This 207-nucleotide RNA was probed chemically with 2A3 and DMS. The 2A3 profile rests on 1,783 reads.

[RMDB]
RNA sequence: GGGAACGACUCGAGUAGAGUCGAAAAUAAGCAAAAGACAACCACCUUUCCCGCUGACAAUAGCGUUAUCCCUCUGCACUUCGGUAAUAUGAGGGCACAGUAAAUCCCGCAAGGAAGAGAAUGUGAUUAAACAGUUACAGCUUCGGCUGUAACUGAACAUUAUGCGACGGUUCGCCGUCGCAUAAUGAAAAGAAACAACAACAACAAC
Reactivity to 2A3 in 0.01 (KOAc 150mM, MgCl2 10mM, bicine 150mM(pH8.5), 24C), signal-to-noise 3, nucleotides 027 to 156: u120a020a000g060c040a030a100a010a050g080a090c040a050a070c040c010a040c010c030u030u010u020c030c000c020g000c060u040g010a070c040a130a170u090a090g030c010g040u050u110a120u150c000c000c000u000c010u020g010c020a010c060u020u130c200g110g020u060a040a020u090a060u280g010a020g000g000g000c010a010c000a020g020u080a050a030a100u040c000c000c000g050c050a000a070g030g030a020a040g030a010g030a170a070u100g010u020g040a040u090u180a070a080a040c000a010g000u000u010a000c010a000g020c000u040u070c200g070g000c000u000g000u000a000a000c000u000g000a010a000
Reactivity to DMS in 0.01 (KOAc 150mM, MgCl2 10mM, bicine 150mM(pH8.5), 24C), signal-to-noise 2, nucleotides 027 to 156: u010a070a130g060c000a060a030a080a120g030a130c060a150a120c050c020a140c040c020u000u020u000c010c000c000g010c030u010g040a140c040a080a050u010a040g020c050g000u000u000a100u000c010c030c000u000c020u010g000c050a060c020u000u020c190g080g010u010a060a120u000a070u000g000a030g000g090g060c050a050c060a080g000u010a060a100a100u000c020c000c010g040c100a010a060g000g000a030a040g020a110g000a100a100u000g060u000g020a150u000u000a080a080a210c000a030g000u020u000a000c000a010g040c020u000u040c300g060g010c030u010g000u000a000a010c000u000g000a010a120